[RMDB]
RNA sequence: GGGAACGACUCGAGUAGAGUCGAAAAGAUAUGGAAUGAACUACCUUGUUCCCAGCGUUGAAAUCGGAAACGAUGGAGCUGAACACAAGGCAUUCCUAAGUCAAACCAAGGGGUUCGCCCCUUGGAAGUCCCAUAUUCGGUUCGCCGAAUAUGGGACAAAAGAAACAACAACAACAAC
Reactivity to 2A3 in 0.01 (KOAc 150mM, MgCl2 10mM, bicine 150mM(pH8.5), 24C), signal-to-noise 1, nucleotides 027 to 126: g000a030u050a050u140g000g060a010a030u010g000a060a040c040u080a140c300c000u000u000g010u020u080c040c100c010a000g000c010g260u300u010g040a020a050a000u040c010g020g030a020a090a020c000g000a000u020g000g040a030g000c000u000g070a110a060c010a000c000a100a000g020g020c010a000u020u000c010c000u020a170a050g070u060c030a100a060a140c010c010a000a000g080g030g020g000u060u080c290g220c020c000c030c000u020u010g010g000a000a000
Reactivity to DMS in 0.01 (KOAc 150mM, MgCl2 10mM, bicine 150mM(pH8.5), 24C), signal-to-noise 1, nucleotides 027 to 126: g000a040u020a300u010g000g010a050a020u000g010a050a050c080u030a300c020c020u000u000g000u000u010c240c110c020a000g000c010g000u020u020g000a020a140a010u000c000g000g000a110a060a170c010g000a000u020g010g020a090g020c000u010g020a070a080c210a020c010a000a040g000g020c020a000u000u000c000c000u000a050a100g000u000c000a060a090a200c000c000a050a000g030g000g000g000u000u050c290g040c010c020c000c000u000u000g000g000a040a120